RNA sequence: GGGAACGACUCGAGUAGAGUCGAAAAUCGUUACAGUAAUAACGACAGUGCUACGCUACACAGCGCCCAAACAGGUGCAAAAGUUUUGGGUAAACAAAAAUGGGGAAAGCCGUCUGUGAAACCACCAGCUAGAUUUAAGGUUCGCCUUAAAUCUAGCAAAAGAAACAACAACAACAAC
Reactivity to DMS in 0.01 (KOAc 150mM, MgCl2 10mM, bicine 150mM(pH8.5), 24C), signal-to-noise 1, nucleotides 027 to 126: u010c010g000u000u000a060c120a090g010u000a050a270u030a020a060c010g000a020c080a130g000u010g000c010u010a090c100g040c010u000a090c100a090c030a100g060c040g030c000c000c000a100a020a080c100a160g040g000u000g050c070a030a120a050a070g000u000u000u000u000g020g000g010u000a060a060a100c080a000a040a010a110a070u020g000g000g010g000a100a150a080g020c120c000g020u000c000u030g040u000g000a050a180a080c030c000a070c120c080a170
Reactivity to 2A3 in 0.01 (KOAc 150mM, MgCl2 10mM, bicine 150mM(pH8.5), 24C), signal-to-noise 1, nucleotides 027 to 126: u000c010g000u040u020a010c040a220g160u240a160a260u070a090a000c010g030a020c000a010g010u030g050c000u120a050c030g000c000u040a000c050a000c020a050g020c010g020c010c000c000a020a090a020c150a070g120g000u130g050c070a040a030a080a180g020u060u000u070u040g050g000g020u070a080a050a010c030a010a090a050a020a020u150g000g050g000g000a000a080a040g080c040c010g050u000c070u010g020u000g100a050a060a000c010c010a030c010c000a000